[RMDB]
RNA sequence: GGGAACGACUCGAGUAGAGUCGAAAACACGUCUGUAAUCCUAGCGCUUUGAGAAGCUGAGGUGAGCUCAGGAGGUCAAGGCUGCAGUAAGCCAUGAUUGCACCACUGCACUCUAGCCUGGGCAACAGGCUGUCACUAGCUUCGGCUAGUGACAGCCAAAAGAAACAACAACAACAAC
Reactivity to DMS in 0.01 (KOAc 150mM, MgCl2 10mM, bicine 150mM(pH8.5), 24C), signal-to-noise 1, nucleotides 027 to 126: c070a140c190g020u000c050u000g010u000a080a130u020c020c020u000a020g030c130g010c050u010u000u010g000a050g000a040a050g030c000u010g010a120g020g010u000g010a090g030c100u010c060a050g000g010a130g020g030u000c090a060a080g020g020c040u010g000c060a040g000u000a050a050g000c040c100a090u020g020a100u000u000g010c020a030c000c190a030c010u000g000c030a050c040u000c030u000a110g000c000c000u000g020g000g020c150a090a050c060a080
Reactivity to 2A3 in 0.01 (KOAc 150mM, MgCl2 10mM, bicine 150mM(pH8.5), 24C), signal-to-noise 1, nucleotides 027 to 126: c060a010c040g070u040c030u030g100u030a090a000u060c000c010u020a020g050c040g000c100u060u160u060g130a180g050a170a070g020c010u020g040a000g070g010u050g050a030g000c020u000c090a000g040g060a070g010g140u100c050a080a020g020g010c020u020g000c040a020g070u090a080a030g000c010c040a100u140g040a150u030u180g030c000a000c020c000a010c020u020g000c040a020c000u050c010u030a020g040c000c010u000g000g030g040c010a020a020c020a010
An RNA of 177 nucleotides, treated with DMS and 2A3 and read out base by base. Reactivities are given for positions 27 through 126. Conditions: 150 mM KOAc, 10 mM MgCl2 and 150 mM bicine (pH 8.5), 24 C.